[RMDB]
RNA sequence: GGGAACGACUCGAGUAGAGUCGAAAACCAAUGAUCAGGGUGGGAGGCAGUGCUCUGAGGGCCCAGGUCCCUGUGUCAAUCUGUGGGGCCCUGUCUCAGUUUCCUGGCAGUAUGGCAGCGUGCUGGCCGUGCUUUAAGAGGUUGGCUUCCUACUGGAAGCCACCUCACUAUUCGUAGUGAGGUGGCUAAAAGAAACAACAACAACAAC
Reactivity to 2A3 in 0.01 (KOAc 150mM, MgCl2 10mM, bicine 150mM(pH8.5), 24C), signal-to-noise 3, nucleotides 027 to 156: c010c000a010a070u140g060a090u070c030a030g020g010g050u060g040g060g010a010g010g000c010a000g010u020g030c010u010c020u030g020a040g010g000g010c030c100c020a020g060g130u180c190c070c010u010g000u030g030u070c070a100a200u060c080u140g110u200g070g000g020g000c000c000c000u000g000u010c000u000c000a040g020u020u100u060c000c000u000g020g010c010a010g020u080a020u140g040g000c050a050g030c080g190u170g050c070u080g070g030c000c010g030u060g030c030u070u160u170a170a020g070a020g090g040u020u030g040g010c020u040u020c000c000u070a170c030u040g000g020a020
Reactivity to DMS in 0.01 (KOAc 150mM, MgCl2 10mM, bicine 150mM(pH8.5), 24C), signal-to-noise 1, nucleotides 027 to 156: c000c010a100a160u000g000a100u000c040a050g000g000g000u000g000g040g020a030g020g020c000a070g000u000g000c030u000c020u020g020a140g000g010g030c000c050c070a080g030g000u000c030c020c030u000g020u020g020u000c070a090a130u010c080u000g040u010g020g010g010g000c020c020c010u000g000u020c020u000c020a130g040u000u000u000c010c010u000g050g030c030a040g000u000a050u010g000g000c000a050g010c100g010u010g090c030u010g090g040c030c020g030u010g010c040u010u000u020a070a090g000a140g030g050u000u000g010g000c040u000u000c010c000u000a120c090u000g000g010a300